[RMDB]
RNA sequence: GGGAACGACUCGAGUAGAGUCGAAAAUCUAUAAGGGCAAUGUGACGCAUGAUGCUAGCUCUGCCAUUAAUAGACCACAACUCACAUUUGUGAAGAAUUUUAUUACUGCCAAUCCGGCAUGGAGUAACAACUGGAGGCUUCGGCCUCCAGAAAAGAAACAACAACAACAAC
Reactivity to DMS in 0.01 (KOAc 150mM, MgCl2 10mM, bicine 150mM(pH8.5), 24C), signal-to-noise 3, nucleotides 027 to 129: u000c010u020a060u000a010a200g040g000g050c000a000a060u030g020u000g000a190c200g020c020a150u050g000a140u040g050c000u020a300g000c030u030c060u010g020c000c000a050u000u000a000a100u030a000g000a080c090c010a060c040a080a090c090u010c040a000c120a220u000u090u100g030u050g020a050a070g000a000a000u060u020u070u000a080u130u060a020c080u000g000c050c000a110a090u060c000c000g000g060c010a000u080g010g050a020g030u040a010a060c190a080a110